[RMDB]
RNA sequence: GGGAACGACUCGAGUAGAGUCGAAAACCUCUCCACCAACACUCUGGGCAUAUUCUCAGGUGACGGAGGGGGUGUGGACGGAAACAUGAUAUUCCAGAAUGUCAAACACAUGUCUAUAAGCCUGCUGGUGUAUACUGUCGUUCGCGACAGUAUACACAAAAGAAACAACAACAACAAC
Reactivity to DMS in 0.01 (KOAc 150mM, MgCl2 10mM, bicine 150mM(pH8.5), 24C), signal-to-noise 3, nucleotides 027 to 126: c000c000u000c030u000c000c010a070c100c090a240a200c020a030c010u000c000u010g010g000g020c300a070u000a070u010u020c000u000c010a030g000g010u010g030a030c300g010g000a030g020g020g000g010g000u010g030u000g000g020a060c040g000g000a140a110a050c080a130u000g000a050u010a080u000u010c060c130a160g010a020a030u000g010u000c040a030a070a140c300a010c030a140u010g010u000c030u030a130u000a070a120g020c030c030u000g010c110u000g030
Reactivity to 2A3 in 0.01 (KOAc 150mM, MgCl2 10mM, bicine 150mM(pH8.5), 24C), signal-to-noise 4, nucleotides 027 to 126: c020c020u020c010u040c010c010a080c030c030a070a090c020a020c020u300c020u020g010g030g010c120a140u080a230u300u060c020u000c010a010g030g000u010g010a020c060g020g010a010g030g030g000g000g000u020g040u010g010g050a020c040g030g040a050a040a000c030a050u070g020a020u050a070u090u090c070c020a080g200a060a030u070g000u060c030a080a100a000c060a010c000a070u100g010u000c020u040a070u020a130a070g060c020c010u070g060c110u180g090